This 207-nucleotide RNA was probed chemically with DMS and 2A3. DMS adducts were read by reverse transcription with MarathonRT.

RNA sequence: GGGAACGACUCGAGUAGAGUCGAAAAUCGUUAAUCCAGCGACUGAAUGAAGUUGAGCGCACUCGUGAGUGGAUAGAGUGCGAGUUGCGAGAAGUGCGUAACCGACUGCAACGUAAGCGCAGCCAGCAGAAGGACGUUAUCGACUGGUCGGGCGAUAGACUUGUAUUCGAUUCGUCGAAUACAAGUCAAAAGAAACAACAACAACAAC
Reactivity to DMS in 0.01 (KOAc 150mM, MgCl2 10mM, bicine 150mM(pH8.5), 24C), signal-to-noise 2, nucleotides 027 to 156: u010c010g040u000u000a080a150u010c010c040a210g010c010g020a110c030u000g010a070a160u010g010a120a130g020u000u000g020a100g040c020g030c030a050c000u000c050g010u000g010a160g030u000g010g020a120u000a110g000a030g000u000g010c010g010a050g000u000u010g020c030g000a140g000a040a140g010u000g020c130g030u020a070a120c040c010g000a160c040u000g000c030a060a040c040g000u000a000a080g030c030g020c030a050g000c010c000a130g090c070a090g000a080a110g040g020a060c040g020u000u010a110u000c110g000a070c000u000g010g020u000c060g020g000g050c000g020a100u020a180
Reactivity to 2A3 in 0.01 (KOAc 150mM, MgCl2 10mM, bicine 150mM(pH8.5), 24C), signal-to-noise 4, nucleotides 027 to 156: u050c010g000u030u080a030a030u020c050c040a020g030c000g040a050c060u070g100a070a070u100g050a120a030g030u070u070g040a050g060c010g000c000a000c010u010c010g040u080g140a120g050u120g000g050a050u050a110g050a010g010u040g000c010g010a010g000u060u020g030c050g030a050g020a150a060g100u110g060c010g020u030a050a080c020c010g030a060c040u030g000c040a060a020c080g080u110a090a050g030c050g000c050a030g040c000c040a030g000c030a020g040a100a040g040g030a020c000g010u030u080a050u080c010g070a050c030u010g010g000u010c010g020g000g020c000g030a020u050a100